[RMDB]
RNA sequence: GGGAACGACUCGAGUAGAGUCGAAAAGACGUGGAGGUUGCGCGCCCUCCUUUGCGCGUAAGUACGUCGAAAUUCGGUGCUUGGGAUCGCACCGUUCGAUCCAUUUGAUAUCCGCUUGGUGCCGCGGUUGGGCAUUUACACUUACCCGAAAGGGGAAGCCAUCCCUACUGUUCGCAGUAGGGAUGGCAAAAGAAACAACAACAACAAC
Reactivity to 2A3 in 0.01 (KOAc 150mM, MgCl2 10mM, bicine 150mM(pH8.5), 24C), signal-to-noise 1, nucleotides 027 to 156: g000a010c000g000u060g000g080a170g130g180u110u070g010c000g000c000g010c040c000c020u220c000c030u040u060u130g020c000g000c000g010u000a020a020g030u050a030c010g010u000c080g010a000a000a220u060u010c010g000g000u000g040c010u090u130g050g070g000a020u020c000g000c000a040c000c000g000u070u060c010g000a030u010c030c000a010u060u030u300g080a100u090a050u100c000c000g030c080u060u200g060g000u050g000c010c040g060c000g150g030u120u050g020g000g000c000a000u030u060u140a010c000a030c010u060u200a040c000c000c000g040a070a060a000g030g000g000g010a010a010
Chemical mapping of a 207-nucleotide RNA with 2A3. It was measured as part of the RMDB library OK3TST. The 2A3 profile rests on 470 reads. Values cover nucleotides 27 to 156.